[RMDB]
RNA sequence: GGGAACGACUCGAGUAGAGUCGAAAAAAAUGAACAUUAAUAUGUGAAGCCUGUCUAUUGAUGGCUAAUUGUGGUGGCUACUAGCACUGUGAGAGCUCUCUGCCUAUCUGAGAUAGGUGUUCUGGGAACUUCAAACAAUUGAUAUUCCUGAAAUAUAGUUUUACUACGUAUUCGUACGUAGUAAAACAAAAGAAACAACAACAACAAC
Reactivity to 2A3 in 0.01 (KOAc 150mM, MgCl2 10mM, bicine 150mM(pH8.5), 24C), signal-to-noise 3, nucleotides 027 to 156: a000a000a000u100g040a060a000c060a040u220u200a200a080u200a080u210g040u030g040a030a000g020c020c020u050g040u080c030u060a110u120u110g050a020u030g040g020c010u030a110a120u080u070g070u060g040g000u010g010g030c030u040a040c030u030a130g060c010a050c090u010g040u040g090a060g000a000g100c000u000c010u010c040u080g030c000c010u040a040u000c070u100g080a100g010a140u010a020g000g040u020g040u060u020c030u040g000g040g010a040a050c010u020u010c040a040a180a160c050a170a240u080u050g000a000u010a030u070u050c020c030u030g050a040a110a040u170a070u100a020
Reactivity to DMS in 0.01 (KOAc 150mM, MgCl2 10mM, bicine 150mM(pH8.5), 24C), signal-to-noise 1, nucleotides 027 to 156: a070a030a060u000g000a080a050c010a080u010u000a050a140u010a130u000g010u000g010a160a130g000c020c000u000g030u000c070u000a130u010u000g010a080u000g000g000c040u020a030a110u000u000g000u000g010g060u000g030g000c030u000a070c120u010a100g000c060a100c000u000g020u010g000a180g000a070g010c050u000c070u010c020u000g000c010c000u000a010u000c000u000g000a200g020a070u000a030g000g010u000g000u000u000c040u010g000g020g010a030a000c010u000u010c010a050a080a160c140a080a150u000u000g000a030u010a070u000u000c010c000u000g000a030a030a070u000a080u020a150